[RMDB]
Source information
Structure probing data (2A3 and DMS) for a 170-nucleotide construct. Values are in units of 0.01, from 0 to 300, in steps of 10. The 2A3 profile rests on 1,441 reads.
RNA sequence: GGGAACGACUCGAGUAGAGUCGAAAAUGUAAGAAGUGUUACUGUCGAGUACAACAUUCAUGCUGUAUUAGACACACUACUUGCUUCUUCUAGUCUUAGAACCUUUGUUGUAGAUAAGUCUUUGUCACGGCCGCAUUCUUCGGAAUGCGGAAAAGAAACAACAACAACAAC
Reactivity to 2A3 in 0.01 (KOAc 150mM, MgCl2 10mM, bicine 150mM(pH8.5), 24C), signal-to-noise 2, nucleotides 027 to 129: u180g000u030a000a010g030a120a050g120u020g050u130u150a040c090u040g000u020c000g010a030g010u040a040c000a000a000c000a060u140u250c110a120u190g000c020u060g000u000a000u010u010a000g020a000c000a000c000a050c000u150a000c000u030u000g010c000u000u010c020u000u020c050u000a020g030u000c040u040u210a090g100a070a120c000c050u000u000u070g070u050u020g020u010a000g060a240u100a050a140g040u100c000u020u120u150g000u140c090a060c060g060g030
Reactivity to DMS in 0.01 (KOAc 150mM, MgCl2 10mM, bicine 150mM(pH8.5), 24C), signal-to-noise 4, nucleotides 027 to 129: u020g050u030a030a000g000a300a000g090u030g070u040u030a050c290u030g080u040c040g020a180g150u000a000c060a000a070c010a070u010u020c300a100u070g030c060u050g010u050a000u000u000a130g020a050c160a100c040a000c040u050a030c000u000u060g020c010u020u000c090u000u030c040u000a080g000u060c200u000u000a080g020a090a150c100c020u070u000u020g040u070u060g020u020a030g010a050u040a080a100g010u000c110u000u070u010g000u040c100a020c150g030g100